[RMDB]
RNA sequence: GGGAACGACUCGAGUAGAGUCGAAAAGAACGUCUGUUUCGACAGACGUUCCGCGCACAAGAUAUAGCUUAAACAAAGCAUCCAGUUUACACCUAGAAGACUUCAUUCAUUAUGAAUAUCUUGACCAAUUAUGUCCUGAACGUUCGCGUUCAGGAAACUAACUAUACUCCUUCGGGAGUAUAGUUAGAAAAGAAACAACAACAACAAC
Reactivity to DMS in 0.01 (KOAc 150mM, MgCl2 10mM, bicine 150mM(pH8.5), 24C), signal-to-noise 2, nucleotides 027 to 156: g020a020a020c010g010u000c000u000g020u000u000u000c300g040a090c010a000g010a020c000g000u000u000c000c000g010c130g000c060a270c030a020a050g010a080u000a060u000a130g000c050u010u000a060a050a110c060a090a080a060g040c010a300u010c040c010a100g020u000u010u000a140c100a150c300c010u010a050g020a080a170g040a300c040u010u000c030a050u010u000c150a120u000u020a060u000g030a090a050u000a020u000c000u000u000g000a070c040c070a040a110u000u000a090u000g000u010c000c000u020g010a040a000c000g020u000u000c300g030c030g050u000u000c000a050g010g000a010a000a100
Reactivity to 2A3 in 0.01 (KOAc 150mM, MgCl2 10mM, bicine 150mM(pH8.5), 24C), signal-to-noise 7, nucleotides 027 to 156: g000a000a000c000g010u000c010u010g060u040u120u180c200g090a010c000a000g000a000c000g000u000u000c010c000g030c010g010c000a060c010a070a050g040a020u080a020u060a130g030c030u080u100a130a160a030c080a090a090a000g020c010a030u060c040c030a030g010u060u120u100a070c070a050c030c030u070a070g050a120a020g040a110c020u020u030c030a040u080u050c020a040u060u300a040u140g020a020a010u030a050u010c010u010u030g050a050c090c080a080a100u230u120a080u300g090u040c000c000u010g000a010a010c000g010u050u070c230g010c000g110u000u000c010a000g000g000a010a000a010